[RMDB]
RNA sequence: GGGAACGACUCGAGUAGAGUCGAAAAUUAAACAUGGUUACCAUAUUGAUUCCGUCAAGGUAGCCAUGAGACGGAAUCAAAAUAUAAAAGCUGAGCGUUACGAAAAACCUAAUGCUCAGCAAAAAAACAUCACGUAUAUGUUCGCAUAUACGUGAUGAAAAGAAACAACAACAACAAC
Reactivity to DMS in 0.01 (KOAc 150mM, MgCl2 10mM, bicine 150mM(pH8.5), 24C), signal-to-noise 3, nucleotides 027 to 126: u010u010a030a090a170c040a020u000g010g020u000u010a130c020c030a160u000a140u000u000g020a030u000u000c060c010g020u000c020a180a140g030g020u000a030g000c020c050a020u010g000a100g020a020c030g000g010a010a000u000c040a080a030a110a090u020a070u000a080a070a060a070g010c000u000g000a010g010c000g020u000u000a000c080g000a050a090a050a100a100c140c130u000a010a000u000g000c000u020c020a010g030c000a000a000a050a110a020a010a020
Reactivity to 2A3 in 0.01 (KOAc 150mM, MgCl2 10mM, bicine 150mM(pH8.5), 24C), signal-to-noise 2, nucleotides 027 to 126: u110u060a060a020a020c060a050u060g020g040u070u080a030c010c010a030u070a210u250u060g040a040u050u020c010c030g020u000c010a040a080g140g030u020a030g040c000c000a000u020g000a010g020a000c050g050g000a010a000u050c000a030a030a100a010u200a020u060a020a090a020a000g000c010u010g010a000g000c000g000u000u010a010c040g070a060a120a170a130a110c010c040u020a020a000u020g000c000u000c020a010g020c000a070a010a000a000a020a000a000